An RNA of 177 nucleotides, treated with DMS and read out base by base. Values cover nucleotides 27 to 126. For DMS the reverse transcriptase was MarathonRT. The RNA was probed in 150 mM KOAc, 10 mM MgCl2 and 150 mM bicine (pH 8.5) at 24 C.
RNA sequence: GGGAACGACUCGAGUAGAGUCGAAAAGAUAUGGACAUUCCUGGGCGAUCCAUGAAUUUCGAGGAUCACGGGAUUCGGAAACGAAUUUGUGGGAGAAACAUGGAUCGCCCAGGAAUGUCCUAAGUCACAUAGCUUACAUGUUCGCAUGUAAGCUAUGAAAAGAAACAACAACAACAAC
Reactivity to DMS in 0.01 (KOAc 150mM, MgCl2 10mM, bicine 150mM(pH8.5), 24C), signal-to-noise 3, nucleotides 027 to 126: g000a050u000a300u000g000g000a010c000a020u000u000c000c000u000g000g010g020c010g020a010u000c010c000a010u010g010a160a210u000u000u000c000g000a120g010g010a070u010c010a010c010g010g020g000a010u000u000c000g000g010a130a090a220c000g000a020a000u000u000u010g010u000g010g000g000a050g000a020a020a080c000a010u000g000g000a010u000c000g000c000c000c000a000g000g000a000a000u000g000u000c000c000u000a010a060g010u010c040a280